[RMDB]
RNA sequence: GGGAACGACUCGAGUAGAGUCGAAAAUAGAUUAGAGUAAUAGCAAUCGUCGUAUUCUGAUCAGUGUAUGUGACGAUUGGAGAACGCUACAUACACUUGAGACGGUAGCGUUCUCUCUCCGUCUCAAGAUAGUAUGCGGAUUCGUCUGUAUGCUAUCAAAAGAAACAACAACAACAAC
Reactivity to DMS in 0.01 (KOAc 150mM, MgCl2 10mM, bicine 150mM(pH8.5), 24C), signal-to-noise 9, nucleotides 027 to 126: u030a070g010a050u010u010a030g000a050g020u010a050a070u030a100g010c030a040a030u010c030g010u000c020g010u000a020u010u000c020u010g000a080u030c110a130g000u020g010u020a040u020g010u010g000a010c000g010a030u000u000g000g010a040g010a050a030c030g010c010u010a030c030a070u020a170c170a120c130u000u020g000a050g010a060c120g000g000u010a010g010c050g010u000u010c020u000c010u010c060u000c040c070g000u000c000u000c030a050a110
Reactivity to 2A3 in 0.01 (KOAc 150mM, MgCl2 10mM, bicine 150mM(pH8.5), 24C), signal-to-noise 9, nucleotides 027 to 126: u130a010g070a030u060u040a030g010a010g040u090a040a140u040a100g050c020a010a050u040c020g040u010c010g000u010a020u030u010c020u040g090a130u110c060a060g060u030g010u110a040u040g060u030g000a000c000g010a010u000u020g010g000a010g000a010a000c000g000c000u000a000c000a040u110a020c040a020c060u010u080g030a010g010a030c030g010g010u020a000g000c000g000u010u000c000u000c000u000c000u000c000c010g010u000c000u000c000a000a010